RNA sequence: GGGAACGACUCGAGUAGAGUCGAAAACAACCAGCUGUUGCUCAUUUGGCUGACGACACCUUCCUUAUAAUGAGGCGGCACCCACCGUCAUUGAUAGAUGUGAUCACCAAAGGGCUCGAUGCCGAACGUGCCAAGAAAACUUCGGUUUUCUUGGCACAAAAGAAACAACAACAACAAC
Reactivity to 2A3 in 0.01 (KOAc 150mM, MgCl2 10mM, bicine 150mM(pH8.5), 24C), signal-to-noise 2, nucleotides 027 to 126: c040a020a030c020c010a030g040c040u000g030u160u060g020c030u020c030a210u070u010u060g020g000c060u000g020a050c020g060a020c000a000c020c030u030u080c030c000u110u080a120u130a300a110u120g050a050g050g000c000g000g000c030a110c070c010c010a070c000c000g090u010c050a090u000u150g090a050u100a150g070a040u040g110u080g130a050u090c030a030c070c030a040a090a050g000g020g000c000u000c040g050a050u160g000c000c080g040a070a040c060
Reactivity to DMS in 0.01 (KOAc 150mM, MgCl2 10mM, bicine 150mM(pH8.5), 24C), signal-to-noise 2, nucleotides 027 to 126: c130a070a170c100c010a250g000c060u010g020u000u000g000c030u000c090a120u000u000u000g010g000c170u000g000a060c090g000a070c070a010c040c040u000u000c030c040u010u000a060u040a070a110u000g020a040g000g030c130g020g010c080a100c070c050c050a210c020c000g010u000c000a120u000u000g000a130u010a080g000a100u020g020u000g000a050u000c020a070c090c020a040a060a130g000g010g000c000u020c100g000a070u000g010c030c060g000a070a040c140